Overview
Chemical mapping of a 177-nucleotide RNA with DMS and 2A3. The RNA was probed in 150 mM KOAc, 10 mM MgCl2 and 150 mM bicine (pH 8.5) at 24 C.
[RMDB]
RNA sequence: GGGAACGACUCGAGUAGAGUCGAAAAGUACUGUAUAUCGUGGCCGCGAUAUUAGUAAUCAUGCUGUGCGUCUUUACGCUGAUCAUUCGCGGUAAAGCCAAAAGCGACUCUGCGCAAGCGGAAAAGCGCCAUUUAGUCCUUUCGAGGACUAAAUGGCAAAAGAAACAACAACAACAAC
Reactivity to DMS in 0.01 (KOAc 150mM, MgCl2 10mM, bicine 150mM(pH8.5), 24C), signal-to-noise 2, nucleotides 027 to 126: g000u010a030c000u030g000u010a000u000a000u010c020g010u000g020g000c190c120g010c020g000a000u000a030u000u000a000g000u010a040a190u040c100a080u000g020c030u020g010u040g000c180g000u050c000u000u000u010a040c010g010c000u030g000a090u010c130a140u010u020c090g000c000g000g040u000a020a070a060g010c080c040a010a090a130a070g000c000g000a160c190u000c010u020g000c000g000c280a140a140g000c020g000g000a010a060a060a100g030c070
Reactivity to 2A3 in 0.01 (KOAc 150mM, MgCl2 10mM, bicine 150mM(pH8.5), 24C), signal-to-noise 4, nucleotides 027 to 126: g030u020a020c040u050g080u100a020u010a030u090c040g020u060g220g110c100c040g030c040g020a010u000a010u050u050a030g050u050a020a120u190c090a100u140g050c050u110g050u110g070c080g100u070c000u020u030u000a010c010g000c100u070g040a010u040c060a210u190u170c060g000c040g010g050u010a040a030a000g000c000c010a100a110a050a000g000c000g040a050c000u010c020u060g020c040g000c050a060a040g000c040g020g000a000a110a000a010g100c060

For DMS the reverse transcriptase was MarathonRT.
For DMS, 1,939 sequencing reads were counted.
In probing experiments dimethyl sulfate is read out at A N1 and C N3, which are open when not base-paired.
Values cover nucleotides 27 to 126.
The 2A3 profile rests on 2,909 reads.
It was measured as part of the RMDB library OK1LIB.